RNA sequence: GGGAACGACUCGAGUAGAGUCGAAAAAGGGGGUGGAGAGUAGUAGGAGUGUUGGAGAAGCCCGGUGCUCCUAUGAAAUCUGGAAAAUCCUGAGGCUGAAAGGUGAGAAGGUACAAGGAGGCUUCCAACUCUUCUUGCAAUUCGUUGCAAGAAGAGUAAAAGAAACAACAACAACAAC
Reactivity to DMS in 0.01 (KOAc 150mM, MgCl2 10mM, bicine 150mM(pH8.5), 24C), signal-to-noise 5, nucleotides 027 to 126: a050g020g000g010g020g020u020g010g000a030g000a070g010u010a120g000u000a000g020g000a020g030u000g000u000u000g010g000a220g000a130a120g010c150c020c000g010g000u000g010c020u000c000c000u000a010u000g000a090a110a090u000c020u000g010g000a090a050a120a100u020c010c000u010g000a110g010g020c070u000g010a060a080a080g000g010u030g000a080g000a070a060g020g000u010a030c080a090a050g000g000a090g010g000c070u000u010c010c120a070
Reactivity to 2A3 in 0.01 (KOAc 150mM, MgCl2 10mM, bicine 150mM(pH8.5), 24C), signal-to-noise 3, nucleotides 027 to 126: a000g020g000g000g010g000u080g020g010a010g000a000g000u020a000g000u010a000g010g000a010g010u010g040u020u030g030g020a210g060a180a060g140c000c000c000g030g000u010g010c000u000c000c010u000a000u000g030a010a000a010u010c000u020g020g010a020a030a020a030u050c010c010u040g010a060g040g000c030u030g050a100a020a020g050g030u100g030a070g020a060a030g040g010u060a030c010a040a050g020g010a000g010g000c000u030u000c020c010a020

An RNA of 177 nucleotides, treated with DMS and 2A3 and read out base by base. DMS adducts were read by reverse transcription with MarathonRT. Conditions: 150 mM KOAc, 10 mM MgCl2 and 150 mM bicine (pH 8.5), 24 C.